RNA sequence: GGGAACGACUCGAGUAGAGUCGAAAAGAUGAAAAUAACCAACAAUGUGAUCUUGCUUGCGGAGGCAAACUUUGCACAGUAUAAAAUCUGCAAGUAGUACUAUUGUUGGAAAGGAUACUGUGCAAAAAUAGUACGUGGAGUUCGCUCCACGUACUAUAAAAGAAACAACAACAACAAC
Reactivity to DMS in 0.01 (KOAc 150mM, MgCl2 10mM, bicine 150mM(pH8.5), 24C), signal-to-noise 2, nucleotides 027 to 126: g000a220u050g000a130a100a050a060u060a180a280c030c010a000a010c000a030a060u000g000u000g000a110u050c260u110u000g000c000u010u000g000c030g000g040a130g000g010c280a030a020a020c220u010u010u000g000c000a010c000a000g010u000a020u000a050a060a120a060u030c010u000g000c000a010a000g010u000a040g010u020a020c060u000a000u000u000g000u000u030g000g000a000a080a190g030g000a060u000a050c000u000g000u000g000c000a000a030a030a120
Reactivity to 2A3 in 0.01 (KOAc 150mM, MgCl2 10mM, bicine 150mM(pH8.5), 24C), signal-to-noise 2, nucleotides 027 to 126: g220a010u210g040a100a100a060a020u270a070a110c000c000a000a000c000a010a000u090g080u060g250a230u110c120u110u160g010c010u000u010g000c050g010g020a040g000g060c060a100a030a000c030u000u000u030g000c030a030c000a000g050u030a030u090a180a060a000a150u030c000u000g000c000a000a000g020u000a000g030u030a030c040u000a010u030u000g020u000u000g000g060a000a080a000g060g000a000u000a050c000u000g000u000g000c000a000a000a000a000
Chemical mapping of a 177-nucleotide RNA with DMS and 2A3.
Source: RMDB library OK1LIB, as collected in RNAgym.
The DMS profile rests on 2,370 reads.
Values cover nucleotides 27 to 126.
For 2A3 the reverse transcriptase was SuperScript II with manganese.